[RMDB]
RNA sequence: GGGAACGACUCGAGUAGAGUCGAAAAGGGGUCGGUUGACGGUACUUGGAUUUACCUAAGAGGUGUAGCUGAAGCCUCCACGGCUACACUCCCCACCUUAGGUUGUCAGUACUGUCUAACCGACGGAGGCACCCAAACUUAACGUUCGCGUUAAGAACGCCAUCAUGAUAUUCGUAUCAUGAUGGCGAAAAGAAACAACAACAACAAC
Reactivity to 2A3 in 0.01 (KOAc 150mM, MgCl2 10mM, bicine 150mM(pH8.5), 24C), signal-to-noise 4, nucleotides 027 to 156: g040g010g000g010u000c000g000g000u000u010g000a000c020g010g010u010a020c060u180u300g150g000a030u170u160u240a020c010c000u000a020a000g010a000g000g000u000g000u000a000g000c010u010g010a040a000g010c000c000u000c010c000a040c010g010g000c000u000a000c000a000c010u030c030c000c010c000a020c000c000u000u000a010g020g010u000u000g020u020c140a120g010u010a000c000u010g000u010c000u030a020a000c000c010g010a000c000g000g000a000g000g000c010a040c030c010c000a070a070a090c000u010u010a000a000c000g080u030u090c290g010c010g110u030u050a000a010g020a090a020
Reactivity to DMS in 0.01 (KOAc 150mM, MgCl2 10mM, bicine 150mM(pH8.5), 24C), signal-to-noise 2, nucleotides 027 to 156: g030g000g020g000u000c000g000g000u020u000g000a050c000g000g050u000a010c010u020u010g030g000a030u000u000u000a030c010c040u000a030a010g020a250g020g020u000g030u000a050g020c010u010g000a040a220g010c000c010u000c020c010a300c000g000g000c020u000a010c010a010c000u000c300c060c030c050a300c060c020u000u010a030g010g010u000u010g010u020c000a110g010u010a040c020u000g000u000c000u000a000a090c020c030g010a020c020g000g030a030g000g050c020a030c000c010c020a100a120a150c000u000u010a000a000c000g010u000u000c300g020c040g010u010u000a000a000g010a130a300

This 207-nucleotide RNA was probed chemically with 2A3 and DMS.
The reactions ran in a buffer of 150 mM KOAc, 10 mM MgCl2 and 150 mM bicine (pH 8.5), at 24 C.
The DMS profile rests on 2,972 reads.